This 207-nucleotide RNA was probed chemically with 2A3 and DMS. 2A3 adducts were read by reverse transcription with SuperScript II with manganese. The reactions ran in a buffer of 150 mM KOAc, 10 mM MgCl2 and 150 mM bicine (pH 8.5), at 24 C. The DMS profile rests on 1,489 reads. Values cover nucleotides 27 to 156.

[RMDB]
RNA sequence: GGGAACGACUCGAGUAGAGUCGAAAACAGAGCUAAUGAGCCACAUACCUACCCAAGGUGAAAGCUCCUUCUAUCGCAAUGUGUAACUCAUGAUUCUCAUGACCCCUGGUUGGAGAGAUCCGGACUAUAGACUAGAGGGUGUUCGCACCCUCUAGAAGAUAUAGGUAGCCUUCGGGCUACCUAUAUCAAAAGAAACAACAACAACAAC
Reactivity to 2A3 in 0.01 (KOAc 150mM, MgCl2 10mM, bicine 150mM(pH8.5), 24C), signal-to-noise 1, nucleotides 027 to 156: c040a010g010a000g020c020u090a100a000u070g010a080g060c070c000a010c020a050u060a050c000c020u070a070c020c010c070a080a010g000g000u070g010a120a070a000g060c080u120c070c010u120u070c030u070a080u150c050g020c020a040a070u010g010u010g040u080a010a020c010u000c000a040u000g070a160u160u010c020u010c030a020u100g090a070c000c020c000c010u020g060g040u030u070g020g000a000g020a010g010a100u010c000c000g010g040a010c040u080a030u070a200g140a070c000u000a000g010a000g000g010g000u050g020u000u090c060g080c000a000c000c000c000u000c000u000a000g000a000a000
Reactivity to DMS in 0.01 (KOAc 150mM, MgCl2 10mM, bicine 150mM(pH8.5), 24C), signal-to-noise 1, nucleotides 027 to 156: c100a120g010a110g010c100u010a240a040u000g000a040g040c010c030a070c070a150u020a100c030c010u010a150c050c070c000a060a090g000g010u000g000a070a100a120g020c040u020c030c050u000u000c070u000a000u010c090g020c020a080a090u010g020u000g020u020a030a050c060u010c000a040u000g010a220u010u020c010u000c000a070u010g010a160c010c010c000c080u000g000g020u000u000g000g040a100g020a140g000a100u000c000c020g020g040a070c070u000a100u000a190g040a250c010u000a010g000a040g010g070g040u010g000u000u000c300g060c020a010c000c010c000u010c000u010a000g000a020a130